[RMDB]
Record summary
An RNA of 177 nucleotides, treated with DMS and 2A3 and read out base by base. DMS adducts were read by reverse transcription with MarathonRT. Conditions: 150 mM KOAc, 10 mM MgCl2 and 150 mM bicine (pH 8.5), 24 C. Source: RMDB library RFMREP, as collected in RNAgym. Values cover nucleotides 27 to 126.
RNA sequence: GGGAACGACUCGAGUAGAGUCGAAAAGAGGUAAUCUCAAAUUGUAACAGUGGGUUGAUUUUCCUGGUGAAUCCCGGCCUUGUCCUCCGUCACAAGUGUGACAAGUGUCUCGAAAACGUGUUCGCUAGUUCUGUAGAAAGUUCGCUUUCUACAGAACAAAAGAAACAACAACAACAAC
Reactivity to DMS in 0.01 (KOAc 150mM, MgCl2 10mM, bicine 150mM(pH8.5), 24C), signal-to-noise 4, nucleotides 027 to 126: g010a050g000g010u010a090a080u010c010u000c030a090a080a110u000u010g010u010a080a090c100a090g020u010g000g000g020u000u000g000a100u000u010u000u000c030c010u000g000g030u010g010a100a090u000c030c020c020g000g000c030c020u000u000g020u000c000c010u000c030c030g010u010c300a080c190a170a130g010u000g010u020g020a010c010a030a040g010u000g010u000c030u000c120g010a060a050a080a060c240g000u000g000u000u000c030g020c080u000a100
Reactivity to 2A3 in 0.01 (KOAc 150mM, MgCl2 10mM, bicine 150mM(pH8.5), 24C), signal-to-noise 3, nucleotides 027 to 126: g110a020g010g050u150a100a200u040c020u000c040a100a130a050u180u180g090u090a090a050c020a080g040u090g020g080g010u060u050g050a120u010u040u080u060c010c020u050g040g030u050g050a060a060u020c020c000c000g010g000c020c010u020u020g000u010c000c000u010c020c020g030u030c020a020c010a090a080g050u040g040u050g120a000c000a010a010g090u080g000u050c030u030c080g090a060a030a040a060c050g040u030g030u050u020c000g000c040u010a010